Background:
This 177-nucleotide RNA was probed chemically with 2A3 and DMS. For DMS the reverse transcriptase was MarathonRT. High DMS reactivity at an A or C suggests that its Watson-Crick edge is free. It was measured as part of the RMDB library M2PK50. As a SHAPE reagent, 2A3 marks flexible, mostly unpaired nucleotides at the ribose 2'-OH. Conditions: 150 mM KOAc, 10 mM MgCl2 and 150 mM bicine (pH 8.5), 24 C. For DMS, 951 sequencing reads were counted.
RNA sequence: GGGAACGACUCGAGUAGAGUCGAAAACGAUUAGCAUUCGUGCUAAUCGAAUCAGGUAGUACCUAUCUCUAUUACCUGUAGUGGCCAACGUCCGGACAGAGAAUCGAGUCCUGUUCGCAGGACUCAAAUUCGGACUGUUGUUCGCAACAGUCCGAAUAAAAGAAACAACAACAACAAC
Reactivity to 2A3 in 0.01 (KOAc 150mM, MgCl2 10mM, bicine 150mM(pH8.5), 24C), signal-to-noise 1, nucleotides 027 to 126: c000g000a000u020u000a010g000c000a000u040u000c230g030u020g000c010u000a010a010u020c000g000a000a050u070c010a000g040g050u030a000g010u020a030c060c070u130a170u140c080u020c020u020a010u020u010a020c000c000u000g030u060a080g090u050g060g010c000c060a100a050c030g040u000c000c010g000g030a020c020a040g050a010g050a140a050u260c130g000a010g010u000c000c010u030g060u030u060c250g000c050a000g020g000a020c010u040c010a020a000
Reactivity to DMS in 0.01 (KOAc 150mM, MgCl2 10mM, bicine 150mM(pH8.5), 24C), signal-to-noise 2, nucleotides 027 to 126: c010g000a000u000u000a000g000c000a050u000u010c230g030u010g000c010u000a000a020u000c000g000a020a080u020c050a020g000g000u000a010g030u000a040c240c080u000a170u000c190u020c150u010a000u000u000a000c000c020u000g000u000a070g030u000g000g020c020c020a050a060c120g020u000c040c000g000g030a030c180a140g000a160g000a100a100u010c170g000a030g000u000c000c000u000g010u000u010c210g030c000a000g000g000a030c010u000c000a000a010